[RMDB]
RNA sequence: GGGAACGACUCGAGUAGAGUCGAAAAGAUAUGGACAUGUAGAGAGCGAUAAGAUGGUAUCGGAAACGAUAUACAUCUUUUGACGCUUGGACAUGUCCUAAGUCAAAAGCCGCACUUCGGUGCGGCACAUUAUAACACUGUUCGCAGUGUUAUAAUGAAAAGAAACAACAACAACAAC
Reactivity to 2A3 in 0.01 (KOAc 150mM, MgCl2 10mM, bicine 150mM(pH8.5), 24C), signal-to-noise 9, nucleotides 027 to 126: g010a000u040a030u100g000g000a000c010a000u010g010u090a100g200a020g000a050g300c070g150a140u100a300a010g000a000u010g020g000u020a010u020c000g030g000a050a030a010c040g000a000u010a000u040a120c000a000u010c000u040u010u010u060g120a080c130g000c000u010u010g040g050a000c000a000u010g000u000c000c000u000a030a000g020u000c020a000a010a090a210g000c000c000g030c010a000c010u070u120c300g140g000u000g000c000g000g000c000a000
Reactivity to DMS in 0.01 (KOAc 150mM, MgCl2 10mM, bicine 150mM(pH8.5), 24C), signal-to-noise 9, nucleotides 027 to 126: g010a040u010a300u010g000g000a010c000a000u010g010u000a110g010a290g010a010g010c000g020a140u010a010a010g010a010u000g000g010u000a000u000c000g010g000a090a050a150c000g010a010u000a010u000a110c000a000u000c000u000u000u000u010g020a170c090g010c000u000u000g010g010a050c010a010u000g000u000c000c000u000a010a070g010u000c020a100a080a160a130g010c000c000g010c010a010c000u000u010c210g020g020u000g020c000g000g000c010a010
The record gives the reactivity of an RNA of 177 nucleotides to 2A3 and DMS. For DMS the reverse transcriptase was MarathonRT. The reactions ran in a buffer of 150 mM KOAc, 10 mM MgCl2 and 150 mM bicine (pH 8.5), at 24 C. The 2A3 profile rests on 58,967 reads. It was measured as part of the RMDB library TTRDES.